[RMDB]
RNA sequence: GGGAACGACUCGAGUAGAGUCGAAAAAUCCUCAGGUUCAUAAGCGUGAUGAUUGGGUGUUCAUACUCCAUGCAUGACAUGUGCCUCCUUUGAACCUUGUUACGACCUUGGCACAUUACCCAUCUGAAAAAGACGUUCGCGUUCGCGCGAACGUCAAGACUUAAUUGAAGUUCGCUUCAAUUAAGUCAAAAGAAACAACAACAACAAC
Reactivity to 2A3 in 0.01 (KOAc 150mM, MgCl2 10mM, bicine 150mM(pH8.5), 24C), signal-to-noise 4, nucleotides 027 to 156: a000u010c010c000u030c020a000g000g010u030u030c000a020u050a260a040g030c060g120u100g110a080u040g010a020u110u190g020g020g020u060g030u120u080c040a040u090a080c020u050c110c040a060u160g060c030a020u040g040a070c000a050u030g000u010g020c000c000u030c000c010u020u010u010g010a010a000c000c010u010u100g070u050u130a090c110g050a090c030c080u040u100g000g000c000a000c010a020u000u110a020c010c010c010a060u040c050u100g050a090a020a010a020a020g000a000c000g000u000u000c020g000c000g010u030u050c110g010c000g000c000g120a000a000c000g000u010c000a000a000
Reactivity to DMS in 0.01 (KOAc 150mM, MgCl2 10mM, bicine 150mM(pH8.5), 24C), signal-to-noise 2, nucleotides 027 to 156: a090u010c010c000u010c030a100g010g020u000u000c010a030u010a060a120g000c100g040u020g030a150u010g010a090u000u020g020g020g030u010g030u000u000c040a060u010a040c020u000c070c140a120u000g000c020a050u000g000a050c220a300u000g000u010g000c010c000u000c110c030u010u000u000g000a030a060c030c030u010u000g030u000u000a160c080g010a110c130c040u000u010g000g020c020a030c000a090u000u010a080c020c010c030a070u000c020u010g000a110a100a090a140a170g030a000c030g040u000u000c000g040c030g070u000u000c300g030c050g050c000g000a020a010c010g010u000c000a020a040